Source: RMDB library TTRDEL, as collected in RNAgym. This 177-nucleotide RNA was probed chemically with 2A3 and DMS.

RNA sequence: GGGAACGACUCGAGUAGAGUCGAAAAGAUAUGGAUUUAGGGAGCCUGGUAUCGGAAACGAUACGCAGGCAUCGAUCUAACUGUCCUAAGUCAAACCAGUAUUGGAUCUUCGGAUCCAAUACUGGAACGAAUCUUACUUCUUCGGAAGUAAGAUUCGAAAAGAAACAACAACAACAAC
Reactivity to 2A3 in 0.01 (KOAc 150mM, MgCl2 10mM, bicine 150mM(pH8.5), 24C), signal-to-noise 2, nucleotides 027 to 126: g020a000u110a040u230g030g020a010u000u050u140a060g050g040g010a040g000c010c010u000g000g000u000a030u000c010g030g020a080a050a010c020g000a000u020a050c260g060c200a000g010g000c010a010u060c000g000a010u000c020u050a040a090c150u190g060u100c010c000u050a120a050g060u020c050a060a070a080c010c000a000g000u000a010u010u000g010g010a010u000c010u030u050c300g100g000a010u050c000c000a020a000u000a000c010u000g000g000a010a000
Reactivity to DMS in 0.01 (KOAc 150mM, MgCl2 10mM, bicine 150mM(pH8.5), 24C), signal-to-noise 3, nucleotides 027 to 126: g000a070u010a200u010g010g010a010u000u000u000a040g000g020g000a070g030c000c010u000g030g000u000a000u000c000g010g000a090a080a140c010g020a010u000a000c000g020c010a000g000g010c030a020u000c100g020a030u010c010u000a050a090c300u000g010u000c010c010u000a040a090g010u000c020a080a110a230c000c000a000g000u000a000u000u010g000g000a010u000c010u000u000c230g020g000a010u000c000c000a000a000u000a000c000u010g010g000a020a040
About this RNA:
For DMS the reverse transcriptase was MarathonRT.